[RMDB]
RNA sequence: GGGAACGACUCGAGUAGAGUCGAAAAAUCUGCCGCGAUUUCAGGAUGUUGCGCGUGCGCUGAUCGCCGUUCCGAUACCAGACUUUCUGAUAGUCGAACAGCGAAUCGCGGAACGCUUCGAUGAUGCGCUCGUGCUGUUCCUCGCUGAUUUCGUUGCCGGCAAAUUACAAUUCGUUGUAAUUUGCCGAAAAGAAACAACAACAACAAC
Reactivity to 2A3 in 0.01 (KOAc 150mM, MgCl2 10mM, bicine 150mM(pH8.5), 24C), signal-to-noise 2, nucleotides 027 to 156: a000u080c080u080g000c020c000g010c000g000a000u000u040u000c020a010g000g010a020u030g040u130u040g010c000g000c000g000u010g010c000g010c000u020g030a010u010c010g020c000c000g000u010u010c000c000g000a010u020a130c000c080a050g030a040c030u090u140u180c100u300g110a160u160a110g020u050c030g000a140a030c010a100g100c060g210a140a120u200c090g000c000g010g000a000a000c000g040c060u110u130c030g110a140u060g050a080u120g020c000g000c030u040c040g010u020g000c000u020g040u070u080c050c010u010c050g120c030u020g000a030u000u000u000c010g010u000u000g010c000